[RMDB]
RNA sequence: GGGAACGACUCGAGUAGAGUCGAAAAAGGAAGCUAUCAAUGACGAUAACUCCGUGGUCUCUCUGUCGCCUCAAAAGAUGGAAGAGCUCCAGCUGUUCAAGGGUGACUCUGUUCUGAUCAGGGGAAACCUUCAGAAAUGAUUCGUCAUUUCUGAAGGAAAAGAAACAACAACAACAAC
Reactivity to 2A3 in 0.01 (KOAc 150mM, MgCl2 10mM, bicine 150mM(pH8.5), 24C), signal-to-noise 6, nucleotides 027 to 126: a000g070g010a070a000g010c020u020a020u080c030a080a280u270g110a080c080g020a030u020a050a030c010u000c010c010g020u030g030g000u010c010u000c000u000c040u060g040u030c020g020c020c010u080c030a090a080a040a020g040a030u040g040g000a070a110g020a100g090c030u000c010c010a050g010c030u060g070u190u090c060a080a080g030g000g020u030g020a030c000u000c020u030g080u120u050c050u100g060a060u060c030a020g010g000g020g000a060a050a050
Reactivity to DMS in 0.01 (KOAc 150mM, MgCl2 10mM, bicine 150mM(pH8.5), 24C), signal-to-noise 7, nucleotides 027 to 126: a080g010g000a060a050g000c030u000a010u000c020a140a150u010g010a150c180g000a030u000a020a040c020u000c010c010g000u000g020g000u000c010u000c020u000c040u000g000u000c050g010c040c020u000c120a070a060a090a070g000a030u000g000g010a040a130g010a100g010c140u000c020c030a050g000c040u000g000u010u000c160a080a120g000g000g010u000g010a080c010u010c020u000g000u010u000c120u000g000a060u000c030a080g000g000g000g020a110a090a160
Source: RMDB library OK2TST, as collected in RNAgym. The record gives the reactivity of an RNA of 177 nucleotides to 2A3 and DMS. 2A3 adducts were read by reverse transcription with SuperScript II with manganese. Reactivities are rounded to 0.1 and cut off at 0 and 3.